[RMDB]
RNA sequence: GGGAACGACUCGAGUAGAGUCGAAAAGGGCAAUUCUACUGUUCCUGUGUCAGAACAGAUACAAGUGCUGCUAUUGGGUGACACAGCAUAAACCAGUGGCACGCCAUUUACUACAUUUGGGUAAGGUCAGUGUGUAGUUGAGUAAGUGAAAUGGGUAGCUAUCGCUACUCUUCGGAGUAGCGAUAGCAAAAGAAACAACAACAACAAC
Reactivity to 2A3 in 0.01 (KOAc 150mM, MgCl2 10mM, bicine 150mM(pH8.5), 24C), signal-to-noise 1, nucleotides 027 to 156: g080g000g000c010a050a090u000u180c030u180a220c000u010g010u020u050c000c000u050g010u020g030u060c040a010g010a000a060c010a000g030a080u130a120c060a300a000g080u060g050c010u010g040c030u040a100u080u050g030g040g020u080g000a020c030a030c040a040g130c080a060u140a140a130a220c000c000a030g000u000g000g000c040a010c000g000c010c000a010u000u050u170a030c000u010a030c030a110u020u030u100g010g000g000u070a000a010g040g050u100c050a020g010u000g030u030g010u070a050g000u000u080g020a030g010u080a180a010g010u010g160a080a070a130u130g000g050g020u040a010